[RMDB]
RNA sequence: GGGAACGACUCGAGUAGAGUCGAAAAGAAGAGAAGCGCGCGAAUUGGAAACCAGCGAACCGUAUUACGCGCGCAAGGAACCGGGCCUUGGUUCUUUGGAAAGAUUAGAUAAUCUCGCUGGUAAAGACACUGCAUACUCGUUCGCGAGUAUGCAGUGAAAAGAAACAACAACAACAAC
Reactivity to 2A3 in 0.01 (KOAc 150mM, MgCl2 10mM, bicine 150mM(pH8.5), 24C), signal-to-noise 3, nucleotides 027 to 126: g110a030a020g060a010g070a080a000g020c020g000c010g000c000g000a010a040u060u040g050g000a030a140a100c000c000a000g000c000g000a110a140c020c020g010u050a010u050u210a180c030g000c010g000c000g000c000a000a000g030g000a000a000c000c000g070g230g040c010c040u050u140g040g000u000u000c000u010u000u030g040g060a110a050a030g090a060u160u240a070g070a140u190a060a110u040c070u000c060g000c000u000g000g000u010a010a010a000g060a010
Reactivity to DMS in 0.01 (KOAc 150mM, MgCl2 10mM, bicine 150mM(pH8.5), 24C), signal-to-noise 1, nucleotides 027 to 126: g000a100a140g010a190g020a140a100g030c000g000c010g050c000g030a120a000u030u020g000g000a040a060a100c020c000a000g000c010g000a000a190c000c030g000u020a060u020u040a050c010g010c020g000c000g000c000a050a000g000g000a030a000c000c020g000g000g010c100c080u000u000g000g000u000u000c000u010u000u020g020g020a120a020a020g010a000u000u000a120g010a140u040a100a050u000c110u000c000g000c000u020g030g000u030a060a130a070g000a250
Chemical mapping of a 177-nucleotide RNA with 2A3 and DMS.
For 2A3, 1,791 sequencing reads were counted.
For 2A3 the reverse transcriptase was SuperScript II with manganese.
DMS (dimethyl sulfate) methylates the pairing face of unpaired adenines and cytosines.
The RNA was probed in 150 mM KOAc, 10 mM MgCl2 and 150 mM bicine (pH 8.5) at 24 C.